[RMDB]
RNA sequence: GGGAACGACUCGAGUAGAGUCGAAAAGACAGCGAAAAAGCGUCUGUGAAAGGAGAGGGGGAAAACAGACGCGAAAGCGAUGUCAGACGAAACCCCUCUCCGAGUCUGACAUCGCUGCUGGAAGAAAGGGUUAACAAUUGUUCGCAAUUGUUAACCCAAAAGAAACAACAACAACAAC
Reactivity to DMS in 0.01 (KOAc 150mM, MgCl2 10mM, bicine 150mM(pH8.5), 24C), signal-to-noise 2, nucleotides 027 to 126: g000a220c010a040g010c000g010a080a060a110a100a290g000c000g020u000c000u000g010u010g000a090a080a130g000g010a040g000a030g000g000g000g020g030a100a030a060a020c010a000g050a010c000g030c000g000a050a090a030g000c010g000a020u000g000u010c030a050g000a020c010g020a060a130a150c050c000c000c000u010c020u000c020c050g000a040g000u020c000u000g000a000c000a020u000c000g030c000u000g000c020u000g010g030a160a150g000a080a070a110
Reactivity to 2A3 in 0.01 (KOAc 150mM, MgCl2 10mM, bicine 150mM(pH8.5), 24C), signal-to-noise 3, nucleotides 027 to 126: g070a000c020a000g000c010g190a190a050a000a070a000g020c010g000u010c010u000g050u040g080a260a140a110g010g000a000g010a010g000g000g000g000g000a000a090a020a070c000a000g040a020c030g020c000g010a040a050a000g000c000g000a010u000g000u020c000a000g020a000c050g060a060a030a040c010c000c000c010u000c000u020c000c000g000a020g010u000c010u010g000a000c000a000u000c010g010c000u040g000c010u000g030g100a060a010g070a050a080a040